[RMDB]
RNA sequence: GGGAACGACUCGAGUAGAGUCGAAAAGGGGAAUAUAUUUGUUGAAAACAUCUAGUUUUUGAGUUAUGCAUAGCCUGAAUAAACAAGGAGAGCUUGUUCUAUUUCUAGAUCACCUUUCACUCUGUUCAUCCCAGUUGGUGGGAGUGGGGUGGGGUGACGCGUAGCUAUGAUUCGUCAUAGCUACGCGAAAAGAAACAACAACAACAAC
Reactivity to 2A3 in 0.01 (KOAc 150mM, MgCl2 10mM, bicine 150mM(pH8.5), 24C), signal-to-noise 1, nucleotides 027 to 156: g060g030g010g000a070a010u120a030u050a070u240u080u100g010u000u010g020a060a040a000a000c000a010u030c010u020a050g110u020u050u030u180u090g080a100g010u200u190a050u300g040c010a010u080a140g000c000c040u050g020a020a050u240a170a130a110c120a090a020g060g010a140g000a050g060c000u030u000g010u010u000c040u070a060u020u040u070c020u010a030g010a140u010c000a000c030c000u010u290u250c020a040c000u030c000u000g100u270u150c010a080u040c180c000c000a060g030u110u180g120g060u100g000g000g000a050g000u120g000g000g000g000u020g010g010g000g000u000g030a010